[RMDB]
RNA sequence: GGGAACGACUCGAGUAGAGUCGAAAAAGCACUGGUAUGAUACGUCGUACCAGUGCAGUCGUUGGGAUGGAACGCAAUUAAAUACAUGUGUGACGUGUAUUUGCGAACGACGUAAUUAUUUUUCAAAAUCACGCUAUCGUGUUCGCACGAUAGCGAACAGAUCUUCACUCUUCGGAGUGAAGAUCUGAAAAGAAACAACAACAACAAC
Reactivity to 2A3 in 0.01 (KOAc 150mM, MgCl2 10mM, bicine 150mM(pH8.5), 24C), signal-to-noise 1, nucleotides 027 to 156: a010g000c020a020c020u050g000g010u020a020u000g010a020u000a070c260g080u000c020g000u030a000c010c000a010g000u000g010c000a000g040u000c000g000u000u030g090g070g020a150u090g000g090a060a090c040g000c020a030a030u130u200a200a090a010u060a000c040a040u020g070u020g120u190g270a080c000g020u000g000u010a000u030u030u050g050c000g000a010a020c010g060a000c050g000u030a020a140u190u170a090u110u050u040u000u030c070a050a040a040a180u160c080a020c070g000c000u000a000u020c000g000u000g010u090u080c190g000c100a000c000g000a000u000a000g000c000g000a010a000
An RNA of 207 nucleotides, treated with 2A3 and read out base by base. Conditions: 150 mM KOAc, 10 mM MgCl2 and 150 mM bicine (pH 8.5), 24 C. Source: RMDB library M2RFPK, as collected in RNAgym.